[RMDB]
RNA sequence: GGGAACGACUCGAGUAGAGUCGAAAAUUGGGUUUUCCAGCUCCGGGGCGCGCAUCACUUUGGCUGUGUACAUUUCCAUUUCCAUGGACUUGCCUGAGCCCUGGGUGUGCCAGACCACGCCAGCCCUGCCGUCGCUUCGCACAGCCUGCAUGGUGGAGGACUCCUUUUAUUUCGAUAAAAGGAGUCCAAAAGAAACAACAACAACAAC
Reactivity to 2A3 in 0.01 (KOAc 150mM, MgCl2 10mM, bicine 150mM(pH8.5), 24C), signal-to-noise 1, nucleotides 027 to 156: u110u050g000g020g060u020u000u070u110c010c010a020g030c050u010c030c030g030g000g000g000c050g000c000g000c040a050u070c020a050c060u120u150u130g030g000c020u010g020u000g050u160a070c050a100u070u030u030c000c000a030u180u050u110c050c080a050u020g000g010a020c000u040u080g020c000c030u040g050a040g040c000c000c020u040g020g040g000u050g000u040g020c000c000a020g000a020c000c030a020c060g020c020c030a010g000c030c010c000u050g020c060c050g070u050c070g000c020u130u090c070g000c060a010c030a010g040c020c000u030g050c070a080u130g020g100u120g020g040a070